[RMDB]
RNA sequence: GGGAACGACUCGAGUAGAGUCGAAAAGAGGAUUCAACGAGCUUCGUAGCAACGAUAGCAACGUAGCUUUUGCUACGACCCAAGCUAUCGAGGGUAGCUACGUCCCCUGCUCGAGGGUAGAAUCCGAACUCCGUAUCAUCUUCGGAUGAUACGGAGUAAAAGAAACAACAACAACAAC
Reactivity to DMS in 0.01 (KOAc 150mM, MgCl2 10mM, bicine 150mM(pH8.5), 24C), signal-to-noise 3, nucleotides 027 to 126: g010a200g000g010a010u000u000c010a160a200c020g000a030g000c020u020u010c020g000u000a020g050c000a180a190c020g010a020u000a000g010c010a140a150c000g020u000a010g000c000u010u010u010u020g000c000u000a000c000g010a120c180c140c150a070a100g000c000u010a010u000c000g000a080g000g010g010u000a110g000c000u000a010c010g000u000c060c030c010c080u000g000c030u000c020g010a060g010g000g020u030a110g010a040a020u000c010c000g010a140
Reactivity to 2A3 in 0.01 (KOAc 150mM, MgCl2 10mM, bicine 150mM(pH8.5), 24C), signal-to-noise 2, nucleotides 027 to 126: g220a040g000g000a040u000u030c020a080a040c030g020a010g010c060u140u130c050g020u010a000g010c000a030a050c030g020a020u020a010g010c010a000a060c010g000u000a000g020c000u090u120u240u300g010c010u010a000c010g130a130c010c020c010a040a010g000c020u010a010u000c010g020a070g070g160g130u120a040g010c010u020a020c000g030u090c050c040c000c020u050g000c090u000c000g000a070g060g020g030u210a050g000a040a020u000c010c000g000a020